RNA sequence: GGGAACGACUCGAGUAGAGUCGAAAACUUAUUUUCUUAUGACAAUGUUCUUGACCAAGCUGCGUGGAUAUCUCAAACAGCUUCACAUUUACAAGCUACUCAUGGAAUCUCUUUUGGACGCAUGGCAUACUAGACCAGGAUUCGUCCUGGUCUAGUAAAAAGAAACAACAACAACAAC
Reactivity to DMS in 0.01 (KOAc 150mM, MgCl2 10mM, bicine 150mM(pH8.5), 24C), signal-to-noise 2, nucleotides 027 to 126: c060u010u010a070u000u010u010u010c020u010u020a080u000g010a060c100a050a110u000g000u000u010c060u010u000g000a120c180c100a030a080g030c040u000g010c240g050u010g000g010a110u020a080u010c070u000c080a060a100a090c070a040g010c010u000u000c070a090c110a070u010u010u010a030c090a040a060g010c070u010a040c110u000c030a060u000g010g010a040a080u010c050u010c040u000u000u010u000g000g000a070c050g000c070a050u000g000g010c080a150
Reactivity to 2A3 in 0.01 (KOAc 150mM, MgCl2 10mM, bicine 150mM(pH8.5), 24C), signal-to-noise 2, nucleotides 027 to 126: c030u080u050a060u170u070u030u020c070u080u230a090u130g030a030c050a100a170u020g000u070u140c000u040u090g060a050c020c010a000a020g000c010u040g000c020g050u040g040g050a060u030a090u160c060u000c060a080a100a110c020a050g000c000u030u060c050a050c020a120u090u170u180a080c000a090a000g030c000u010a040c010u030c090a020u070g010g050a060a060u030c070u000c040u040u090u020u070g040g030a010c050g070c020a020u060g010g020c000a020